Description:
Source: RMDB library OK2TRN, as collected in RNAgym. This 177-nucleotide RNA was probed chemically with 2A3 and DMS. For 2A3, 683 sequencing reads were counted.

RNA sequence: GGGAACGACUCGAGUAGAGUCGAAAAGAAGGGACCAAGGUGGUGCCCUUACAAUCAGACUUCAAGUACAUACACUGUGUGGCUAGUAUGUUCGCUCACAAUGGAUAAUGCCAUGUCAAGGUGCAACCAGUGGCUAUCCGUUCGCGGAUAGCCACUGAAAAGAAACAACAACAACAAC
Reactivity to 2A3 in 0.01 (KOAc 150mM, MgCl2 10mM, bicine 150mM(pH8.5), 24C), signal-to-noise 1, nucleotides 027 to 126: g100a000a000g010g010g000a000c000c070a030a070g300g030u130g010g000u230g000c000c000c000u040u030a070c030a010a130u070c020a000g050a050c000u110u000c150a150a060g050u050a090c000a080u030a000c030a030c130u050g080u000g010u080g210g000c000u020a020g000u030a110u090g040u080u000c070g000c030u030c020a070c070a000a080u070g000g010a030u050a170a060u120g030c070c000a010u060g060u080c080a040a110g090g000u030g090c060a100a070c040
Reactivity to DMS in 0.01 (KOAc 150mM, MgCl2 10mM, bicine 150mM(pH8.5), 24C), signal-to-noise 1, nucleotides 027 to 126: g030a040a050g000g000g000a050c000c010a190a160g080g000u010g000g010u010g030c000c000c000u030u000a010c100a080a160u000c140a230g000a090c030u000u000c100a020a140g000u000a020c020a040u000a040c010a180c070u000g000u010g110u000g010g030c010u000a100g000u000a050u000g010u000u000c060g010c050u000c120a080c150a160a020u000g000g000a100u030a080a080u010g000c000c040a010u000g000u000c140a060a180g020g020u000g010c040a010a080c160

2A3 adducts were read by reverse transcription with SuperScript II with manganese. DMS adducts were read by reverse transcription with MarathonRT.